The record gives the reactivity of an RNA of 177 nucleotides to 2A3 and DMS. For DMS, 2,197 sequencing reads were counted. For DMS the reverse transcriptase was MarathonRT. As a SHAPE reagent, 2A3 marks flexible, mostly unpaired nucleotides at the ribose 2'-OH. The reactions ran in a buffer of 150 mM KOAc, 10 mM MgCl2 and 150 mM bicine (pH 8.5), at 24 C. 2A3 adducts were read by reverse transcription with SuperScript II with manganese.
RNA sequence: GGGAACGACUCGAGUAGAGUCGAAAAAAAGAUAUGGACAUUCCAUACGUAGUUGGGACGAGGGAGCUCGGAAACGAGCUCCUACCCACCGUCCCAGGUUCGAAGUAUGGAGAUGUCCUAAGUCAAACUUAUGUGCUAGGUUCGCCUAGCACAUAAGAAAAGAAACAACAACAACAAC
Reactivity to 2A3 in 0.01 (KOAc 150mM, MgCl2 10mM, bicine 150mM(pH8.5), 24C), signal-to-noise 1, nucleotides 027 to 126: a020a000a050g020a020u020a000u030g010g000a000c000a010u010u020c000c000a000u020a000c040g240u070a020g230u030u020g020g000g010a000c000g030a000g000g040g010a020g010c010u010c000g010g040a000a010a000c000g000a000g000c000u000c000c000u000a030c000c020c000a000c000c000g000u000c000c000c000a000g060g070u150u220c250g300a300a050g000u000a000u010g000g000a030g070a030u010g010u000c010c010u000a010a010g000u020c020a090a020a180
Reactivity to DMS in 0.01 (KOAc 150mM, MgCl2 10mM, bicine 150mM(pH8.5), 24C), signal-to-noise 3, nucleotides 027 to 126: a050a120a080g000a030u000a070u020g000g000a040c000a000u000u000c000c000a010u000a000c000g020u000a210g020u020u000g000g020g020a020c010g020a150g030g000g000a010g010c000u000c000g000g020a020a010a040c010g020a020g010c000u000c000c010u010a010c030c010c040a300c050c010g000u010c010c000c000a010g010g010u000u000c300g000a240a110g000u000a010u000g010g000a010g020a050u000g000u000c000c010u000a000a070g000u000c030a150a090a140